RNA sequence: GGGAACGACUCGAGUAGAGUCGAAAACUUAUUUAGAUAAAUGGACUCGCUAAGGAUGUGCGCCAUUUAUCAGGAAUGCCAUUAUGAGCCUGAUUAUUGAUGUUAUUUCGCGUAAAACAUCCGUCAACGAUUAAAUCAGGUUCGCCUGAUUUAAUCGAAAAGAAACAACAACAACAAC
Reactivity to DMS in 0.01 (KOAc 150mM, MgCl2 10mM, bicine 150mM(pH8.5), 24C), signal-to-noise 3, nucleotides 027 to 126: c050u000u000a080u020u000u010a210g000a010u000a000a010a020u000g010g000a300c140u010c060g000c020u010a110a130g020g010a040u010g040u000g020c100g000c020c000a020u000u000u000a010u000c010a110g010g020a030a050u000g020c070c030a050u000u000a040u010g010a080g000c120c110u000g000a080u000u000a080u000u020g010a020u000g000u000u000a050u000u000u000c040g010c240g020u010a030a020a060a030c020a030u000c000c050g030u010c210a060a130
Reactivity to 2A3 in 0.01 (KOAc 150mM, MgCl2 10mM, bicine 150mM(pH8.5), 24C), signal-to-noise 2, nucleotides 027 to 126: c010u090u100a030u240u160u140a070g000a010u020a000a000a010u040g000g040a070c010u020c120g000c080u090a080a080g080g010a040u020g010u000g010c040g020c000c000a000u000u010u020a010u000c000a000g000g050a050a020u070g070c000c000a050u130u080a050u220g040a010g080c030c100u110g090a100u100u080a050u100u090g050a050u050g090u220u050a040u080u070u110c050g000c040g030u020a020a070a070a070c000a010u010c020c000g160u100c040a110a010